[RMDB]
RNA sequence: GGGAACGACUCGAGUAGAGUCGAAAAGAGGGCGUCCCACAGCAAGCAAGCAGCUCUGACCCUGUGUGCUGGCCGGGCUCGUGUUCCAGGCCAUGGCAUGUCCGAACGAGGUGGUGUCCUAUGAGAUCGUCCUGUCCAUCACCAGGCUCAUCAAGAAUAGCCCCAUACUAUUCGUAGUAUGGGGCUAAAAAGAAACAACAACAACAAC
Reactivity to 2A3 in 0.01 (KOAc 150mM, MgCl2 10mM, bicine 150mM(pH8.5), 24C), signal-to-noise 1, nucleotides 027 to 156: g140a040g000g020g030c050g030u020c010c050c000a090c000a000g110c040a090a000g000c040a040a000g000c020a020g020c000u060c090u050g000a060c000c010c040u020g010u000g020u010g140c020u040g010g000c020c030g000g000g000c050u020c140g060u190g060u090u090c030c010a040g040g000c010c020a050u070g030g070c020a020u030g040u040c040c020g020a070a070c060g010a000g000g030u040g010g010u040g010u080c010c020u070a110u070g060a070g020a090u030c030g020u000c020c010u030g020u010c030c010a050u040c010a020c070c000a000g040g060c090u070c010a080u200c020a030a000g150a110a020
Reactivity to DMS in 0.01 (KOAc 150mM, MgCl2 10mM, bicine 150mM(pH8.5), 24C), signal-to-noise 1, nucleotides 027 to 156: g000a080g000g020g030c000g000u000c060c000c040a190c100a090g010c050a120a120g010c060a080a080g040c040a050g010c040u000c020u000g040a120c090c040c050u000g020u000g030u000g000c000u010g010g010c010c000g000g000g010c040u000c120g000u000g030u010u000c020c010a110g010g000c000c000a070u010g000g000c020a130u010g000u000c010c030g020a060a110c030g000a120g020g000u000g010g000u000g000u000c040c000u000a090u000g040a120g000a080u020c090g030u090c010c010u000g030u000c040c060a040u010c040a050c100c010a060g000g040c030u020c060a040u020c070a100a130g000a090a270